The data come from the RNA Mapping Database (RMDB), library OK2TST. Chemical mapping of a 177-nucleotide RNA with DMS.
RNA sequence: GGGAACGACUCGAGUAGAGUCGAAAAGGCGGUUUGACUGCUCUUAACACUGAGUUAAAAGCUUCUCUGGAUUCAAAGAAACGAUGUGUUGAGCAGUUAGAGAUCCAAUUGAUUCAGCAUAAGGAGACACGUCCUCACGUUUCGACGUGAGGACGUGAAAAGAAACAACAACAACAAC
Reactivity to DMS in 0.01 (KOAc 150mM, MgCl2 10mM, bicine 150mM(pH8.5), 24C), signal-to-noise 1, nucleotides 027 to 126: g020g050c070g000g000u010u000u000g010a010c020u000g000c010u000c030u030u050a010a010c010a000c030u000g000a300g000u000u000a060a090a110a180g000c020u000u000c000u000c200u050g010g000a130u000u000c010a040a030a060g040a230a060a010c020g000a210u000g010u000g000u030u030g000a010g010c000a010g000u000u000a030g060a060g060a090u000c000c000a060a130u010u000g000a050u000u000c060a110g050c140a050u000a130a060g000g030a110g000a190